[RMDB]
RNA sequence: GGGAACGACUCGAGUAGAGUCGAAAAAUGGGGCGCCGGGGGCUCCCUGAAGGUCACCAUUCUGCAGAGCAGUGACAGCCGGGCCUUUAGCACUGUACCCCUGACACCUGUCCCCCGCCCCAGUGACCCGCAACGUAUUAUUCGUAAUACGUUGCGGAAAAGAAACAACAACAACAAC
Reactivity to 2A3 in 0.01 (KOAc 150mM, MgCl2 10mM, bicine 150mM(pH8.5), 24C), signal-to-noise 3, nucleotides 027 to 126: a010u030g020g000g000g010c040g040c090c040g010g000g010g010g010c030u040c030c000c000u050g030a050a020g000g000u010c000a030c130c010a040u170u060c020u020g050c050a090g040a080g230c010a030g040u040g140a170c040a010g050c060c090g020g000g050c000c000u040u060u050a040g000c070a030c120u090g050u270a140c000c000c030c000u020g010a020c020a020c040c010u010g040u060c000c000c000c000c000g000c000c000c000c000a010g030u040g040a050c000
Reactivity to DMS in 0.01 (KOAc 150mM, MgCl2 10mM, bicine 150mM(pH8.5), 24C), signal-to-noise 2, nucleotides 027 to 126: a060u000g000g000g000g020c060g010c190c160g000g000g000g010g020c010u020c070c040c000u000g010a070a030g000g000u000c040a090c070c070a220u080u040c040u000g020c110a130g000a160g020c040a020g000u000g000a090c130a090g010c140c030g010g020g000c020c030u010u000u000a050g000c100a030c110u000g000u000a170c030c000c010c000u010g000a070c080a020c150c070u040g000u010c020c000c000c080c020g000c000c000c000c000a060g000u020g000a130c120
This 177-nucleotide RNA was probed chemically with 2A3 and DMS. For 2A3, 1,954 sequencing reads were counted.